[RMDB]
RNA sequence: GGGAACGACUCGAGUAGAGUCGAAAAUCAGUGAGUGUUUGCACAUGAGCUUUGCCUCUUUGGGGAAGCUGACACAUGCGCUCCUUUCUCGACAGCCCAAAAAAGCAAAAUCAAAGUUUAUGUCAAACGAGCAGAUCUAGUUCGCUAGAUCUGCUCGAAAAGAAACAACAACAACAAC
Reactivity to 2A3 in 0.01 (KOAc 150mM, MgCl2 10mM, bicine 150mM(pH8.5), 24C), signal-to-noise 1, nucleotides 027 to 126: u070c020a010g060u050g090a010g010u130g030u080u140u190g080c040a010c000a110u080g020a000g010c000u100u060u170g120c050c000u120c070u120u140u170g030g020g000g000a000a000g060c010u030g080a000c070a000c000a110u030g060c050g000c010u000c000c000u000u000u000c060u010c050g050a040c000a050g010c000c000c000a030a090a070a060a000a030g030c140a060a110a060a140u160c020a090a080a130g040u100u110u030a090u120g100u050c030a080a050a000
Reactivity to DMS in 0.01 (KOAc 150mM, MgCl2 10mM, bicine 150mM(pH8.5), 24C), signal-to-noise 1, nucleotides 027 to 126: u020c070a060g030u000g000a040g020u010g000u000u000u000g030c110a080c150a070u000g000a010g000c010u000u000u000g030c070c020u000c220u000u000u010g010g000g010g000a030a090g010c020u010g010a050c170a200c050a100u000g030c070g010c050u000c080c000u000u000u000c010u000c050g010a020c180a160g020c000c010c030a000a050a110a010a090a050g020c180a040a070a100a110u030c100a070a000a080g000u000u010u010a030u000g020u010c040a070a070a120

This 177-nucleotide RNA was probed chemically with 2A3 and DMS. Source: RMDB library OK2TST, as collected in RNAgym. For DMS, 757 sequencing reads were counted. 2A3 is a SHAPE reagent: it acylates the 2'-hydroxyl of flexible nucleotides of all four kinds. For DMS the reverse transcriptase was MarathonRT. The 2A3 profile rests on 914 reads.